[RMDB]
The record gives the reactivity of an RNA of 177 nucleotides to DMS and 2A3. DMS adducts were read by reverse transcription with MarathonRT. 2A3 adducts were read by reverse transcription with SuperScript II with manganese. The RNA was probed in 150 mM KOAc, 10 mM MgCl2 and 150 mM bicine (pH 8.5) at 24 C. It was measured as part of the RMDB library OK2TST. Reactivities are rounded to 0.1 and cut off at 0 and 3.

RNA sequence: GGGAACGACUCGAGUAGAGUCGAAAACAACUAUAACUGACCAUGACAUAGUGGUUGAAGGGGACUUAUUUACAGAACAGGAAUUGGGAUUAUUAUGUUUAGCUGGUGCUGAAUACCCAUCAGUGUGUGUAAACUGCCAAUUCGUUGGCAGUUUACAAAAAGAAACAACAACAACAAC
Reactivity to DMS in 0.01 (KOAc 150mM, MgCl2 10mM, bicine 150mM(pH8.5), 24C), signal-to-noise 3, nucleotides 027 to 126: c040a100a080c090u010a080u000a080a080c080u010g020a060c030c000a040u000g010a180c180a050u010a090g010u010g020g000u000u000g010a090a060g030g000g020g010a120c130u000u010a050u000u000u000a040c100a110g000a050a050c070a070g000g020a030a080u000u000g020g010g000a100u000u010a070u000u010a100u010g010u000u010u000a040g010c050u010g010g020u000g000c030u010g000a080a040u010a170c030c010c000a060u000c050a100g000u000g020u000g000
Reactivity to 2A3 in 0.01 (KOAc 150mM, MgCl2 10mM, bicine 150mM(pH8.5), 24C), signal-to-noise 1, nucleotides 027 to 126: c000a050a040c010u050a030u150a300a120c090u050g050a020c000c030a010u050g080a060c040a050u140a050g020u000g040g000u030u050g050a060a000g020g000g030g000a010c020u080u000a020u170u090u050a040c060a060g010a100a000c000a000g040g070a060a060u050u040g050g020g060a000u020u040a140u170u020a080u250g050u060u010u030a020g010c020u050g010g170u110g000c020u020g000a060a000u090a130c000c020c000a000u030c030a040g010u030g040u050g010